[RMDB]
RNA sequence: GGGAACGACUCGAGUAGAGUCGAAAACGUUCGGACCGCCUUCUAUGCUCGCGUCUUUCGAGGGGUACGUCGCCACUGGCCGCUGAAAAGUGGUGUGGCACUGCUCCGGCGAGGACGUGGGCGGACCCUUAGUUAGGCGAUUCGUCGCCUAACUAAGAAAAGAAACAACAACAACAAC
Reactivity to DMS in 0.01 (KOAc 150mM, MgCl2 10mM, bicine 150mM(pH8.5), 24C), signal-to-noise 4, nucleotides 027 to 126: c090g000u010u010c080g000g000a080c040c020g000c040c040u020u010c080u010a130u030g010c040u000c010g020c020g010u010c020u010u010u010c010g000a300g000g000g000g000u000a010c190g020u000c140g020c000c000a010c010u030g000g030c000c000g040c000u000g000a070a050a170a020g030u000g010g030u000g040u000g000g020c000a020c000u000g000c000u000c000c000g000g010c050g000a030g010g010a010c010g010u000g010g000g020c020g000g000a080c120c040
Reactivity to 2A3 in 0.01 (KOAc 150mM, MgCl2 10mM, bicine 150mM(pH8.5), 24C), signal-to-noise 6, nucleotides 027 to 126: c040g060u070u040c030g030g070a070c000c020g050c030c010u090u060c060u100a120u240g030c010u020c020g020c010g010u020c020u060u300u100c010g020a020g020g010g000g010u010a030c170g010u020c130g000c000c000a000c020u030g200g000c000c010g000c010u020g030a040a060a020a010g010u000g000g030u070g000u000g030g000c000a000c000u000g010c000u010c020c010g080g060c000g000a010g000g000a000c010g000u010g010g000g000c010g000g010a020c010c000